[RMDB]
RNA sequence: GGGAACGACUCGAGUAGAGUCGAAAACUGCGCCCGCUGGGACAUACUUCGGUUACAGGGAGCCUCACUGAAGCGCGCACGGUGAGGCGAAGAACUGUAAUACCGACGUAUGUCCUGUGCUGAAGCGCGCACGGCAACCGAAAGGUGCGAACAGCAGGUAUGUAUGACUGUUCGCAGUCAUACAUACAAAAGAAACAACAACAACAAC
Reactivity to 2A3 in 0.01 (KOAc 150mM, MgCl2 10mM, bicine 150mM(pH8.5), 24C), signal-to-noise 3, nucleotides 027 to 156: c010u010g010c010g030c010c020c010g000c000u010g010g000g000a000c000a000u000a000c000u010u000c000g010g000u010u000a000c000a010g000g010g000a000g010c000c000u010c000a010c010u030g040a190a040g020c010g000c000g010c000a010c000g010g010u000g000a000g000g000c000g000a020a000g000a000a000c000u000g010u010a020a020u070a160c000c000g000a000c000g000u000a000u000g000u000c000c000u000g000u000g000c000u030g020a140a040g000c000g000c000g000c010a010c010g010g000c000a000a010c000c000g050a090a040a030g010g000u010g000c010g020a070a020c030a070g010c010a010g070
Reactivity to DMS in 0.01 (KOAc 150mM, MgCl2 10mM, bicine 150mM(pH8.5), 24C), signal-to-noise 2, nucleotides 027 to 156: c000u010g010c000g030c030c000c020g050c020u010g000g000g010a020c000a010u000a010c010u010u000c000g060g010u000u000a050c020a030g000g000g010a110g040c020c000u000c020a010c010u000g030a110a060g010c030g050c040g020c010a300c040g000g020u000g000a020g030g020c000g000a030a130g000a100a300c000u000g000u000a040a040u000a080c010c000g000a010c030g000u000a040u000g000u000c010c000u000g010u000g040c020u010g010a070a060g020c050g010c010g000c030a300c080g010g000c020a070a080c000c000g010a090a170a150g020g050u000g030c000g020a030a080c020a130g020c010a070g000
Structure probing data (2A3 and DMS) for a 207-nucleotide construct. In probing experiments dimethyl sulfate is read out at A N1 and C N3, which are open when not base-paired. The 2A3 profile rests on 19,458 reads.